Structure probing data (DMS and 2A3) for a 207-nucleotide construct. Values cover nucleotides 27 to 156. For 2A3, 1,583 sequencing reads were counted.
[RMDB]
RNA sequence: GGGAACGACUCGAGUAGAGUCGAAAACAGUGAAACAAGAAUCGAACUAGCUCUCGAUUUGGAAGUUAGCAACCUAAUCUUGAGCGAAAUUACUUGUUAACUAUGAGCGUAGAUAUUUAUGUGAUUGGAUAAUUUGGACAUGGGUUCGACUCCCAUCGACUAGGCUACUGUUCGCAGUAGCCUAGUCAAAAGAAACAACAACAACAAC
Reactivity to DMS in 0.01 (KOAc 150mM, MgCl2 10mM, bicine 150mM(pH8.5), 24C), signal-to-noise 1, nucleotides 027 to 156: c000a000g050u000g000a190a050a090c010a010a010g080a080a040u010c080g000a030a090c040u010a290g010c000u010c000u000c190g010a070u000u000u080g040g010a170a140g000u020u000a080g040c030a080a200c020c000u020a010a000u010c010u010u000g020a100g000c040g000a090a010a010u000u000a060c040u020u000g000u000u000a150a010c000u000a070u000g030a200g000c080g050u020a060g040a120u020a090u010u000u000a020u020g000u000g000a280u030u000g030g010a100u000a060a130u000u010u000g000g000a050c090a040u000g000g040g000u000u000c100g010a280c120u000c060c000c000a070u000c060
Reactivity to 2A3 in 0.01 (KOAc 150mM, MgCl2 10mM, bicine 150mM(pH8.5), 24C), signal-to-noise 3, nucleotides 027 to 156: c020a010g020u010g100a070a000a000c000a010a020g000a060a030u100c080g030a050a060c010u030a090g000c000u000c000u000c000g000a020u000u010u040g030g060a080a050g060u220u240a010g130c040a020a080c000c000u010a000a000u000c000u000u010g010a000g000c030g010a010a040a000u070u020a090c000u010u010g010u020u020a030a000c030u050a080u150g090a060g020c050g020u070a050g050a120u080a140u160u210u070a050u140g080u060g100a110u020u110g060g010a020u060a210a110u130u060u160g030g000a010c020a050u050g010g020g000u010u060c010g020a030c020u000c010c000c020a010u060c010
For DMS, 1,292 sequencing reads were counted. For DMS the reverse transcriptase was MarathonRT. The data come from the RNA Mapping Database (RMDB), library ARCHII.